This 177-nucleotide RNA was probed chemically with DMS and 2A3. For 2A3, 1,697 sequencing reads were counted. Values cover nucleotides 27 to 126. For DMS, 7,607 sequencing reads were counted. Conditions: 150 mM KOAc, 10 mM MgCl2 and 150 mM bicine (pH 8.5), 24 C.
RNA sequence: GGGAACGACUCGAGUAGAGUCGAAAAACAGGAGUUGUGAGGCUUCCUCUUUAGAUGAGCUGAUAGCUAAUAACGCUGUAUCAUCCGCGUAUGUUGCCACAGUGCAGGUGUACAGGGUGUAUAAGACAAUCAGGCAUAGUUUCGACUAUGCCUGAUUAAAAGAAACAACAACAACAAC
Reactivity to DMS in 0.01 (KOAc 150mM, MgCl2 10mM, bicine 150mM(pH8.5), 24C), signal-to-noise 4, nucleotides 027 to 126: a110c060a070g000g020a170g040u000u000g020u000g000a130g010g010c010u010u000c020c010u010c020u000u040u050a110g000a140u020g000a050g000c120u010g030a080u030a020g030c020u010a110a060u010a040a050c050g000c010u000g000u010a070u010c050a020u010c000c040g000c070g020u000a000u030g010u020u010g010c060c090a180c080a090g010u050g010c050a020g010g020u020g010u000a050c010a170g000g000g020u000g010u020a050u000a060a070g020a070c220
Reactivity to 2A3 in 0.01 (KOAc 150mM, MgCl2 10mM, bicine 150mM(pH8.5), 24C), signal-to-noise 4, nucleotides 027 to 126: a020c080a030g020g090a120g000u050u000g020u050g090a150g050g040c010u010u010c000c010u070c000u100u180u190a200g050a300u230g020a020g050c060u020g100a120u090a080g030c000u030a100a010u040a050a000c020g000c080u010g010u020a060u110c010a010u080c000c000g010c040g020u030a060u070g110u040u050g060c000c010a180c030a060g070u100g130c010a010g020g210u050g040u020a000c000a000g000g150g000u020g020u080a060u030a070a060g060a060c080